[RMDB]
Structure probing data (2A3) for a 207-nucleotide construct. For 2A3, 988 sequencing reads were counted. The data come from the RNA Mapping Database (RMDB), library OK3TST.
RNA sequence: GGGAACGACUCGAGUAGAGUCGAAAAAGCCACCGUGCCUGGCCACCCAGCUGAUUUUUAACAAAGGUUCCAAAGCAAUUCAGUGGAGUGCCUUUAUAACAGUGGUGAUGGGCAAAUGACUUUGACCUAAACCUCAGACUUACACAAACUCCAAAAACUCCUACUAAAAUUUCGAUUUUAGUAGGAGAAAAGAAACAACAACAACAAC
Reactivity to 2A3 in 0.01 (KOAc 150mM, MgCl2 10mM, bicine 150mM(pH8.5), 24C), signal-to-noise 2, nucleotides 027 to 156: a000g020c000c000a030c040c020g060u000g010c010c020u020g050g000c020c010a000c020c000c020a010g050c020u010g080a100u070u120u050u080u260a120a040c090a070a000a020g000g000u040u010c040c030a000a100a030g080c040a080a120u200u300c040a050g050u070g050g010a030g000u090g000c000c000u050u090u030a140u040a040a040c050a000g010u020g050g030u040g070a110u190g000g000g000c020a010a060a020u090g030a070c050u020u020u050g090a120c000c030u060a110a080a010c010c000u020c030a020g050a170c030u110u200a040c060a020c000a050a130a030c020u230c240c000a020a080a100a100a150